Chemical mapping of a 177-nucleotide RNA with 2A3 and DMS. For DMS, 24,344 sequencing reads were counted. The RNA was probed in 150 mM KOAc, 10 mM MgCl2 and 150 mM bicine (pH 8.5) at 24 C. The data come from the RNA Mapping Database (RMDB), library OK2TRN. As a SHAPE reagent, 2A3 marks flexible, mostly unpaired nucleotides at the ribose 2'-OH. For 2A3 the reverse transcriptase was SuperScript II with manganese.
RNA sequence: GGGAACGACUCGAGUAGAGUCGAAAACUUACCAUUGCGAUGCAUUUAGCGCAAGACUCCUUUGGUACGGCCUGUAAUGUUACGGCAGAUGGUGCAUUAUCCUUGGAGAUCGACGCGAUAGCUGGUAAGUGGAGGAAUAAUUCGUUAUUCCUCCACUAAAAGAAACAACAACAACAAC
Reactivity to 2A3 in 0.01 (KOAc 150mM, MgCl2 10mM, bicine 150mM(pH8.5), 24C), signal-to-noise 9, nucleotides 027 to 126: c010u020u020a020c010c000a060u030u190g020c040g110a080u130g050c090a120u120u130u270a110g010c020g000c030a060a030g020a020c010u020c010c000u050u030u080g020g000u030a040c060g040g000c010c000u030g070u140a190a190u060g030u070u060a060c160g120g000c030a010g020a090u120g030g040u170g050c020a040u040u080a040u070c000c000u010u020g000g010a030g040a210u070c020g040a060c070g000c000g030a030u060a040g010c020u020g020g010u030a040
Reactivity to DMS in 0.01 (KOAc 150mM, MgCl2 10mM, bicine 150mM(pH8.5), 24C), signal-to-noise 9, nucleotides 027 to 126: c040u000u000a030c010c010a080u010u010g010c050g010a140u010g020c150a140u000u010u010a130g010c020g020c050a130a210g000a070c020u000c010c010u000u000u000g010g010u000a040c240g000g000c010c010u000g010u000a070a100u000g020u000u000a080c150g030g010c030a030g010a090u010g000g010u010g020c020a040u000u000a060u000c010c020u000u000g010g000a030g000a140u000c020g010a150c120g010c010g010a080u000a120g010c030u000g000g000u000a030